Chemical mapping of a 207-nucleotide RNA with 2A3.
It was measured as part of the RMDB library OK3TST.
For 2A3 the reverse transcriptase was SuperScript II with manganese.

[RMDB]
RNA sequence: GGGAACGACUCGAGUAGAGUCGAAAACACAAAUAUUGAUUUCUAUCUUCUCUUUAAAAUUUGCCAGGUCUGAGAAAUCCUAGGCACACAUCAUUUAUGCACCCAUCACCUUGUGCUGAAUGGUGGUUCAAGCCUUCAUGAGUAUUGCACAAGCCCCGAUCACCGAAAGAUUCGUCUUUCGGUGAUCAAAAGAAACAACAACAACAAC
Reactivity to 2A3 in 0.01 (KOAc 150mM, MgCl2 10mM, bicine 150mM(pH8.5), 24C), signal-to-noise 3, nucleotides 027 to 156: c030a000c020a020a160a040u300a110u060u190g060a090u100u190u040c060u090a190u070c030u160u030c030u050c000u040u200u040a140a220a180a210u140u210u120g010c010c010a010g010g010u030c040u130g050a040g060a150a080a040u040c000c050u060a070g000g050c010a010c000a010c000a020u060c010a020u050u040u070a050u190g010c000a010c010c060c030a100u130c010a080c060c080u050u060g000u000g010c010u000g020a020a010u050g000g010u000g010g060u090u130c090a050a030g030c010c000u040u110c040a030u070g030a020g100u100a150u150u130g000c010a020c000a050a020g030c030c010c010c020